[RMDB]
RNA sequence: GGGAACGACUCGAGUAGAGUCGAAAAGAAGAGAAUAAAUAGAGGAGUCAGGGUUCGCACACGCUCCGCGAACCCACGGUAACACUGACUGUGGAGCGGAAAAGGCAGAUACAACACUGCCAAAGAAACUAAUGCUGCAGUUCGCUGCAGCAUUAGUAAAAGAAACAACAACAACAAC
Reactivity to 2A3 in 0.01 (KOAc 150mM, MgCl2 10mM, bicine 150mM(pH8.5), 24C), signal-to-noise 4, nucleotides 027 to 126: g090a010a000g100a000g030a060a070u160a140a040a040u290a040g120a030g230g000a040g000u020c060a100g000g000g010u000u010c000g030c010a040c010a010c100g000c010u000c000c010g030c010g000a000a000c000c010c000a000c010g000g030u070a060a000c040a020c130u070g080a020c000u060g100u150g130g000a000g000c010g030g010a080a180a000a000g000g000c000a000g000a030u120a240c000a060a000c040a030c050u000g000c000c000a000a070a000g040a020a090
Reactivity to DMS in 0.01 (KOAc 150mM, MgCl2 10mM, bicine 150mM(pH8.5), 24C), signal-to-noise 2, nucleotides 027 to 126: g020a070a010g020a120g000a090a070u000a060a040a090u020a100g020a160g000g010a060g000u000c050a070g010g000g000u000u000c000g090c020a090c130a160c040g000c020u000c040c030g000c060g010a000a040c000c000c000a000c100g030g020u000a050a050c080a130c210u010g000a020c010u020g000u020g010g000a020g050c000g000g000a080a050a080a120g000g020c000a040g010a120u020a130c280a110a210c300a090c030u010g000c000c000a110a080a090g000a050a120